[RMDB]
RNA sequence: GGGAACGACUCGAGUAGAGUCGAAAAGAUAUGGAAGUAGAACUACCGUGUACAAGCCUUUGAUCUCGGAAACGAGGGAGGCUUGGACACGGCUACUUCCUAAGUCAAACCCACCUUCGGGUGGGAACAGAAAAAGGUACUUCGGUACCUUUUUCUGAAAAGAAACAACAACAACAAC
Reactivity to 2A3 in 0.01 (KOAc 150mM, MgCl2 10mM, bicine 150mM(pH8.5), 24C), signal-to-noise 2, nucleotides 027 to 126: g020a030u070a040u130g020g010a010a020g000u020a020g050a110a020c100u180a070c300c000g010u010g000u010a000c000a000a000g000c010c010u280u300u060g090a100u070c000u020c030g080g030a110a120a070c000g010a000g000g020g020a010g000g000c030u010u000g000g010a000c000a000c010g040g000c000u010a000c000u000u010c000c000u010a040a000g030u010c000a040a010a180c000c000c000a020c000c000u070u070c300g200g020g010u010g000g010g020a000a030
Reactivity to DMS in 0.01 (KOAc 150mM, MgCl2 10mM, bicine 150mM(pH8.5), 24C), signal-to-noise 2, nucleotides 027 to 126: g010a030u010a300u000g000g010a020a020g010u000a000g020a070a040c100u020a300c020c030g000u000g000u000a020c000a000a000g010c010c010u000u010u000g000a060u010c020u010c000g000g000a110a080a210c040g000a000g000g000g000a010g020g010c000u000u000g000g010a010c000a010c000g000g000c000u000a000c020u000u000c000c000u020a010a090g000u000c020a050a120a180c010c000c000a010c000c010u000u020c170g040g010g020u000g000g010g000a020a090